RNA sequence: GGGAACGACUCGAGUAGAGUCGAAAAAGCGAAAGCUAGUGUAUGGGCUCCGGGGAUAGUACGGACGCAAGUUUGAAACUUGAAGAAAUUGACGGAAGGACACCACAAGGAGUGGAGUGUGCGGGUUCAUUUGAAUGUUCUUCGGAACAUUCAAAUGAAAAGAAACAACAACAACAAC
Reactivity to DMS in 0.01 (KOAc 150mM, MgCl2 10mM, bicine 150mM(pH8.5), 24C), signal-to-noise 2, nucleotides 027 to 126: a050g000c050g030a040a090a200g000c020u000a080g020u020g020u000a050u010g020g000g010c030u000c030c030g010g000g020g020a070u060a060g010u010a080c070g030g000a160c110g010c030a010a010g020u000u010u030g020a100a060a060c040u010u000g000a060a050g000a010a070a070u030u030g010a150c040g010g010a140a080g000g020a100c040a100c050c010a050c070a140a070g000g000a110g000u000g000g010a060g010u030g010u000g010c040g000g000g000u000u020
Reactivity to 2A3 in 0.01 (KOAc 150mM, MgCl2 10mM, bicine 150mM(pH8.5), 24C), signal-to-noise 3, nucleotides 027 to 126: a000g080c070g080a100a040a000g020c040u050a040g060u010g030u090a150u070g010g050g000c020u010c070c020g000g000g000g060a020u040a060g070u050a020c040g010g020a000c020g000c060a000a030g000u030u060u160g210a200a080a030c020u030u000g030a110a040g100a070a170a070u120u170g090a020c000g050g000a030a040g060g000a010c020a030c020c020a030c050a120a040g070g020a090g000u090g010g030a060g020u060g030u070g000c020g020g030g000u000u000
Structure probing data (DMS and 2A3) for a 177-nucleotide construct. As a SHAPE reagent, 2A3 marks flexible, mostly unpaired nucleotides at the ribose 2'-OH. Conditions: 150 mM KOAc, 10 mM MgCl2 and 150 mM bicine (pH 8.5), 24 C. Source: RMDB libraries RFM100 and RFMREP, as collected in RNAgym.